About this RNA
Chemical mapping of a 177-nucleotide RNA with DMS and 2A3. DMS (dimethyl sulfate) methylates the pairing face of unpaired adenines and cytosines. For 2A3 the reverse transcriptase was SuperScript II with manganese.

RNA sequence: GGGAACGACUCGAGUAGAGUCGAAAAAGCCGGCUACGGCCGGCAUGUAUGUGUUGAUGUGUGUGUACAUGUACAUGUGUGAAUAUGAUAUACAUAUACAUACACGCACACAUAAGACACAUAUGAACGUUUAGUAGAACUUCGGUUCUACUAAACGAAAAGAAACAACAACAACAAC
Reactivity to DMS in 0.01 (KOAc 150mM, MgCl2 10mM, bicine 150mM(pH8.5), 24C), signal-to-noise 3, nucleotides 027 to 126: a110g030c030c010g000g020c000u010a120c180g040g010c000c030g010g000c000a000u000g000u000a000u010g010u000g020u000u000g000a040u010g020u000g010u000g000u000g010u010a170c180a030u000g000u000a000c050a000u000g000u010g010u000g000a120a150u020a080u030g000a100u030a020u000a000c000a000u010a100u010a000c000a010u000a180c160a020c020g000c000a000c000a010c010a000u010a100a140g010a010c000a000c000a010u010a000u000g010a090a110
Reactivity to 2A3 in 0.01 (KOAc 150mM, MgCl2 10mM, bicine 150mM(pH8.5), 24C), signal-to-noise 8, nucleotides 027 to 126: a010g020c000c000g000g000c010u040a070c240g140g000c000c000g010g000c000a000u070g020u000a000u000g010u000g000u000u030g080a100u040g000u000g000u000g020u000g010u010a030c030a120u010g020u000a000c010a020u010g020u000g010u010g100a190a070u240a190u300g140a030u070a010u010a200c000a000u020a000u000a020c000a000u020a020c040a000c060g000c000a000c000a000c000a000u050a060a040g020a000c000a000c000a010u010a010u030g070a110a020